[RMDB]
RNA sequence: GGGAACGACUCGAGUAGAGUCGAAAAGCUAGCCAGCGCACGAUGAGACUGCCGUGACGUCUAGCCUGCGUCUCAACUAGUCUCUAUCAAUCAAAACGCUGGGAUUGAUGUACGAGACUAGUACACAGUGUAUGCUCUUCUUCGGAGGAGUAUACACAAAAGAAACAACAACAACAAC
Reactivity to DMS in 0.01 (KOAc 150mM, MgCl2 10mM, bicine 150mM(pH8.5), 24C), signal-to-noise 9, nucleotides 027 to 126: g000c020u000a080g010c090c030a050g010c040g010c030a030c040g000a090u020g000a120g010a090c080u020g010c080c020g010u000g010a080c030g000u040c010u000a090g010c020c020u000g000c050g000u000c010u010c030a120a050c000u000a000g000u000c000u010c000u000a030u000c020a020a010u010c010a060a060a090a110c140g010c100u020g010g000g010a030u000u010g000a010u000g010u040a050c140g000a020g000a010c010u000a000g010u000a070c160a090c210a120
Reactivity to 2A3 in 0.01 (KOAc 150mM, MgCl2 10mM, bicine 150mM(pH8.5), 24C), signal-to-noise 9, nucleotides 027 to 126: g020c010u020a010g020c020c040a030g010c030g010c030a010c030g050a050u150g030a040g080a120c080u120g070c060c010g030u040g060a160c020g020u070c020u020a010g000c000c010u040g030c030g070u000c000u000c020a020a020c000u000a000g000u000c000u000c000u000a000u000c000a020a010u000c010a010a050a070a110c120g050c130u140g050g020g000a000u000u010g000a000u010g030u070a020c140g000a000g000a010c000u000a000g010u050a010c090a000c010a030
Structure probing data (DMS and 2A3) for a 177-nucleotide construct. The 2A3 profile rests on 167,255 reads. 2A3 adducts were read by reverse transcription with SuperScript II with manganese. The RNA was probed in 150 mM KOAc, 10 mM MgCl2 and 150 mM bicine (pH 8.5) at 24 C. Source: RMDB library OK1LIB, as collected in RNAgym. The DMS profile rests on 70,687 reads.